[RMDB]
RNA sequence: GGGAACGACUCGAGUAGAGUCGAAAAGAUAUGGACCAGAACUACAGCUAAGGAGCUUUGAUCUGGUAAUUUUAGUCGGAAACGACUAAAAUUACCAGGGAGCUCCGAAGCUGCUGGUCCUAAGUCACCAUAUGUAAUAGUUCGCUAUUACAUAUGGAAAAGAAACAACAACAACAAC
Reactivity to DMS in 0.01 (KOAc 150mM, MgCl2 10mM, bicine 150mM(pH8.5), 24C), signal-to-noise 4, nucleotides 027 to 126: g010a080u000a300u000g010g000a030c010c000a030g000a110a050c100u020a300c020a010g020c000u050a050a300g000g000a010g030c000u000u000u020g010a050u010c000u010g010g020u010a000a000u000u000u000u000a000g010u000c000g000g020a140a090a300c000g020a010c000u010a000a010a020a000u000u000a000c000c000a020g000g020g020a000g010c000u010c000c000g000a110a030g000c000u000g000c000u000g000g000u000c000c000u000a010a090g000u000c040a280
Reactivity to 2A3 in 0.01 (KOAc 150mM, MgCl2 10mM, bicine 150mM(pH8.5), 24C), signal-to-noise 3, nucleotides 027 to 126: g060a040u110a070u230g000g010a000c000c020a020g020a150a100c260u300a110c270a010g000c010u040a090a030g000g030a000g020c060u300u300u090g080a060u040c000u010g010g000u010a000a010u010u000u010u000a000g000u000c030g070g010a080a070a090c000g000a010c000u010a000a000a010a010u000u000a000c010c000a000g010g000g000a000g000c000u030c010c000g010a010a000g020c000u010g010c000u000g000g000u000c000c000u000a050a020g000u000c030a020
An RNA of 177 nucleotides, treated with DMS and 2A3 and read out base by base. The RNA was probed in 150 mM KOAc, 10 mM MgCl2 and 150 mM bicine (pH 8.5) at 24 C. The DMS profile rests on 3,290 reads. In probing experiments dimethyl sulfate is read out at A N1 and C N3, which are open when not base-paired. The 2A3 profile rests on 7,403 reads. For DMS the reverse transcriptase was MarathonRT. 2A3 adducts were read by reverse transcription with SuperScript II with manganese. High 2A3 reactivity points to a flexible backbone, as in loops and unpaired stretches.